[RMDB]
RNA sequence: GGGAACGACUCGAGUAGAGUCGAAAACAGGAGCAGAAGCAUACGUACCUGCCACCAGAGGUCUGCGAUAUUGUUCCAGGACAGCGUUGUCUGAAGAAGCUCACCGAUGUGCAGACGUCCACCAUGAUGGAUACCUGCACUUCGGUGCAGGUAUCCAAAAAGAAACAACAACAACAAC
Reactivity to DMS in 0.01 (KOAc 150mM, MgCl2 10mM, bicine 150mM(pH8.5), 24C), signal-to-noise 2, nucleotides 027 to 126: c060a080g000g000a300g000c020a090g000a150a300g000c030a070u010a050c110g020u010a050c150c030u000g000c060c010a040c060c040a060g010a070g030g000u000c020u000g000c040g000a120u000a070u000u010g030u000u010c030c010a140g000g010a090c040a060g010c200g030u000u000g000u000c040u000g020a070a160g000a070a100g000c110u010c050a050c070c020g000a040u000g000u000g000c000a000g000a070c010g020u000c000c070a070c070c120a050u000g000a140
Chemical mapping of a 177-nucleotide RNA with DMS.
The DMS profile rests on 956 reads.